[RMDB]
RNA sequence: GGGAACGACUCGAGUAGAGUCGAAAACUGGAAGAACUGCAUGAAGCCGUUGUCCGAGAGGCCGAUGUGUUUUAGGUCGCGAGCAUCGUAGCGGGGAAAGUCACGGAUGGAGAUGGAAUUGAUGCUUUCUAGGAUCUCCGCGACCAGCUGCGGGAUGCAAUAGCGAGGAGUUCGCUCCUCGCUAUUGAAAAGAAACAACAACAACAAC
Reactivity to 2A3 in 0.01 (KOAc 150mM, MgCl2 10mM, bicine 150mM(pH8.5), 24C), signal-to-noise 3, nucleotides 027 to 156: c020u010g050g020a070a050g010a090a020c060u040g000c030a060u130g090a070a020g010c000c000g030u050u060g020u000c050c000g040a050g030a020g060g070c030c010g050a080u070g130u020g040u020u040u110u170a040g020g020u020c000g000c010g060a020g020c030a020u030c030g060u060a030g000c010g010g010g000g030a060a070a040g020u060c020a030c120g070g000a080u110g060g010a060g010a040u070g000g080a050a030u070u140g040a060u100g040c070u060u070u050c050u080a010g090g050a040u020c060u040c030c030g000c000g020a030c040c020a020g060c000u050g000c000g020g030g010a020u090g020
Reactivity to DMS in 0.01 (KOAc 150mM, MgCl2 10mM, bicine 150mM(pH8.5), 24C), signal-to-noise 2, nucleotides 027 to 156: c090u000g020g010a100a090g020a050a080c030u010g030c050a080u020g000a060a050g010c010c010g050u000u000g000u000c030c020g020a140g000a150g020g010c040c010g010a050u040g000u000g010u000u000u000u010a100g000g000u000c030g050c030g010a100g000c060a110u000c020g020u010a050g000c060g030g020g040g000a090a100a090g010u010c050a080c060g000g040a040u000g000g000a100g010a110u010g020g010a090a090u020u000g000a140u010g010c040u000u000u000c030u020a130g000g010a070u000c040u000c020c020g010c020g020a060c010c010a120g000c000u000g010c020g000g000g000a160u000g000